[RMDB]
Structure probing data (2A3 and DMS) for a 177-nucleotide construct. The RNA was probed in 150 mM KOAc, 10 mM MgCl2 and 150 mM bicine (pH 8.5) at 24 C.
RNA sequence: GGGAACGACUCGAGUAGAGUCGAAAAGCGAUACGGGGCGCAUCUUCAUCUCGAUGGCUUGGUCGGAUCGCGCAUACUGAUAGGCGCGCUUGCCAUCCACAUGGAUGGCACUAUAGAGAGGCGGUGCCGGAUCCAGAUGAUUCGUCAUCUGGAUCCGAAAAGAAACAACAACAACAAC
Reactivity to 2A3 in 0.01 (KOAc 150mM, MgCl2 10mM, bicine 150mM(pH8.5), 24C), signal-to-noise 2, nucleotides 027 to 126: g000c020g010a000u050a040c030g020g010g030g000c180g050c070a010u020c010u220u050c030a250u080c070u070c050g040a050u000g020g010c030u060u060g100g000u120c010g070g010a020u020c000g000c020g000c020a020u140a230c060u100g080a100u090a150g070g000c000g000c000g020c050u020u050g000c000c000a000u000c010c000a160c010a230u300g000g020a020u020g000g040c010a010c010u110a130u130a050g080a000g000a050g020g110c040g000g060u080g040c000
Reactivity to DMS in 0.01 (KOAc 150mM, MgCl2 10mM, bicine 150mM(pH8.5), 24C), signal-to-noise 2, nucleotides 027 to 126: g000c040g000a040u000a080c060g010g020g000g000c040g050c030a050u000c030u020u000c100a120u010c130u000c140g000a040u000g010g000c040u000u000g030g020u010c060g000g010a050u000c040g000c000g000c100a060u010a190c200u030g000a080u010a050g020g000c040g020c030g000c040u030u000g030c000c000a010u000c010c000a190c300a110u000g050g000a020u000g000g000c000a020c060u020a100u030a080g000a110g000a140g000g010c070g010g000u000g020c030
DMS adducts were read by reverse transcription with MarathonRT. Source: RMDB library OK2TST, as collected in RNAgym.